RNA sequence: GGGAACGACUCGAGUAGAGUCGAAAAGUGAAGUUACUAUUUAGGGCUUCAUUUUAUUUCAAAGAAUUUGCUACCCGCACUUUCACUGCUACCACUGCUGUAGGUAGUUGUAUAAAGAGUGUAGUGCCUAUGUGAUAGCGUUCGCGCUAUCACAUAGAAAAGAAACAACAACAACAAC
Reactivity to DMS in 0.01 (KOAc 150mM, MgCl2 10mM, bicine 150mM(pH8.5), 24C), signal-to-noise 2, nucleotides 027 to 126: g030u000g000a030a000g000u000u010a090c040u000a300u010u020u020a050g010g010g000c000u000u000c000a000u000u000u000u010a070u010u030u010c030a080a020a120g010a140a090u000u010u000g000c060u000a110c020c040c020g000c000a010c030u010u000u010c080a060c000u000g010c020u000a010c020c000a020c050u010g020c280u010g010u010a050g010g000u000a000g010u000u000g020u000a100u010a050a050a030g000a020g030u010g000u000a010g020u000g000c070
Reactivity to 2A3 in 0.01 (KOAc 150mM, MgCl2 10mM, bicine 150mM(pH8.5), 24C), signal-to-noise 2, nucleotides 027 to 126: g010u000g000a010a010g010u060u040a270c010u100a160u250u210u300a090g010g000g000c000u000u000c000a010u010u030u000u040a060u010u120u030c020a030a070a090g110a100a160u090u140u180g010c010u090a100c000c010c050g040c000a010c000u030u130u060c020a010c000u000g040c000u060a010c000c010a050c030u140g070c060u210g140u180a050g020g010u010a020g000u000u050g010u030a170u040a060a100a020g060a000g000u040g000u030a030g000u010g030c000